The data come from the RNA Mapping Database (RMDB), library TTRDEL.
Chemical mapping of a 177-nucleotide RNA with 2A3 and DMS.
RNA sequence: GGGAACGACUCGAGUAGAGUCGAAAAGAUAUGGAUACCAUGUAGGUACUAGUGCGUUGAAAUCGGAAACGAUGGAGCACAUACUGAGAUGGUAUCCUAAGUCAAAAGGGCCUGUUCGCAGGCCCAACAUUAAUCUGAACUUCGGUUCAGAUUAAUGAAAAGAAACAACAACAACAAC
Reactivity to 2A3 in 0.01 (KOAc 150mM, MgCl2 10mM, bicine 150mM(pH8.5), 24C), signal-to-noise 5, nucleotides 027 to 126: g020a020u090a020u170g000g000a010u010a010c000c010a000u020g030u050a020g020g020u040a050c170u230a230g020u010g000c030g220u300u070g020a030a020a010u000c000g010g010a090a040a030c020g010a010u010g020g010a020g020c010a000c000a000u000a000c000u030g000a050g010a150u000g000g000u000a010u010c000c000u000a000a000g020u000c020a020a010a070a170g010g000g000c030c020u020g070u080u090c300g030c100a000g000g010c010c000c000a000a000
Reactivity to DMS in 0.01 (KOAc 150mM, MgCl2 10mM, bicine 150mM(pH8.5), 24C), signal-to-noise 7, nucleotides 027 to 126: g010a020u010a300u000g000g000a020u000a000c000c000a000u000g000u000a300g000g000u000a010c280u020a120g020u000g010c000g020u000u000g010a080a140a010u000c000g010g000a120a100a180c010g000a010u000g000g000a110g020c000a010c000a210u000a000c010u000g000a170g000a030u000g000g010u000a000u000c000c000u010a010a090g010u000c040a060a060a140a110g000g010g000c000c000u000g000u000u000c190g020c000a010g000g010c000c000c000a000a030
2A3 is a SHAPE reagent: it acylates the 2'-hydroxyl of flexible nucleotides of all four kinds. For 2A3, 11,365 sequencing reads were counted. DMS adducts were read by reverse transcription with MarathonRT. For 2A3 the reverse transcriptase was SuperScript II with manganese.